[RMDB]
RNA sequence: GGGAACGACUCGAGUAGAGUCGAAAAAGACUAUGGUACGCCAUAGUCAACCCUAUGAUGAGAGAGCUGUUAAAUGAUUGAUGAUUAGAGGAUGGCUGGCUGAGGAGCCACCAGUACGCUGGUGGCAUCACGAUACGUGCUUCGGCACGUAUCGUGAAAAAGAAACAACAACAACAAC
Reactivity to DMS in 0.01 (KOAc 150mM, MgCl2 10mM, bicine 150mM(pH8.5), 24C), signal-to-noise 2, nucleotides 027 to 126: a020g010a020c010u010a020u000g000g020u010a090c180g010c000c000a000u000a030g000u000c010a030a040c030c010c000u010a070u010g010a030u030g000a140g000a060g000a050g000c050u000g020u010u000a070a080a140u010g000a090u020u010g030a100u010g000a040u010u000a030g000a080g000g010a060u000g000g040c030u000g000g020c050u000g020a050g050g000a090g000c030c000a000c010c000a000g040u010a070c140g040c000u000g000g000u000g000g000c000a060
Reactivity to 2A3 in 0.01 (KOAc 150mM, MgCl2 10mM, bicine 150mM(pH8.5), 24C), signal-to-noise 3, nucleotides 027 to 126: a020g000a000c000u000a000u000g020g000u090a090c300g060c040c000a000u000a000g000u000c000a000a010c000c010c010u030a030u160g200a070u210g010a030g000a000g000a000g010c050u010g040u150u170a040a180a130u170g100a070u160u030g040a040u070g000a010u000u100a050g070a000g040g000a020u050g060g000c060u040g020g000c030u050g070a080g020g040a000g010c000c000a000c000c000a000g000u040a000c290g000c040u000g020g000u000g000g000c000a020